[RMDB]
An RNA of 177 nucleotides, treated with DMS and read out base by base. Values are in units of 0.01, from 0 to 300, in steps of 10. The reactions ran in a buffer of 150 mM KOAc, 10 mM MgCl2 and 150 mM bicine (pH 8.5), at 24 C.

RNA sequence: GGGAACGACUCGAGUAGAGUCGAAAAGAUAUGGAACCUGUACUUCGAUAAGCUCACAUCGGAAACGAUGUCGAGCUUUUGACGAAGGUAGGGUUCCUAAGUCAAAACUUGUUCCUUCGGGAACAAGCUUAAUCGAUUGCUUCGGCAAUCGAUUAAGAAAAGAAACAACAACAACAAC
Reactivity to DMS in 0.01 (KOAc 150mM, MgCl2 10mM, bicine 150mM(pH8.5), 24C), signal-to-noise 2, nucleotides 027 to 126: g000a050u000a300u010g000g050a010a010c010c000u000g020u010a300c040u010u010c010g020a240u000a010a020g040c010u010c000a020c000a020u000c000g000g000a130a080a160c010g020a000u000g030u000c260g000a020g000c000u000u000u010u000g000a260c080g020a050a050g000g000u010a300g020g000g000u010u010c000c000u000a010a060g010u020c090a150a030a080a300c010u000u000g010u000u010c000c000u000u050c250g010g000g010a010a000c010a000a000g000